Background:
Structure probing data (2A3 and DMS) for a 177-nucleotide construct. Conditions: 150 mM KOAc, 10 mM MgCl2 and 150 mM bicine (pH 8.5), 24 C. DMS adducts were read by reverse transcription with MarathonRT. The data come from the RNA Mapping Database (RMDB), libraries RFM100 and RFMREP.
RNA sequence: GGGAACGACUCGAGUAGAGUCGAAAAUCAAAAUUUGUUGGUUAAGUAACUUAGUAGCUUAGCUUCGGAUUUUCGUAACAAAUUUGCUGUUCAGAACACUUCCAUGUACGCGGCAUUGCCGAGCAAUGUCUACUGUAAACUUCGGUUUACAGUAGACAAAAGAAACAACAACAACAAC
Reactivity to 2A3 in 0.01 (KOAc 150mM, MgCl2 10mM, bicine 150mM(pH8.5), 24C), signal-to-noise 5, nucleotides 027 to 126: u080c020a020a020a040a030u060u040u040g040u040u080g060g000u030u020a020a000g000u030a090a090c090u130u190a120g020u060a020g140c000u010u020a000g020c000u030u050c020g080g020a070u070u040u020u120c070g040u070a050a030c020a100a110a040u050u060u060g020c040u020g040u060u060c030a030g080a150a030c050a040c110u070u020c020c020a020u050g030u080a070c050g000c000g060g000c040a090u020u170g000c000c010g040a030g000c020a030a050u040
Reactivity to DMS in 0.01 (KOAc 150mM, MgCl2 10mM, bicine 150mM(pH8.5), 24C), signal-to-noise 3, nucleotides 027 to 126: u030c050a100a020a020a020u000u010u010g010u000u000g000g000u000u000a020a020g000u000a100a110c100u030u000a110g000u010a220g010c010u000u000a040g000c000u010u000c020g000g010a080u000u000u010u010c120g020u000a030a090c120a030a040a070u010u010u000g010c030u000g000u000u020c080a170g000a110a060c110a050c070u000u020c020c040a050u040g010u000a030c150g010c020g020g000c010a090u000u010g010c030c020g000a060g020c080a080a090u010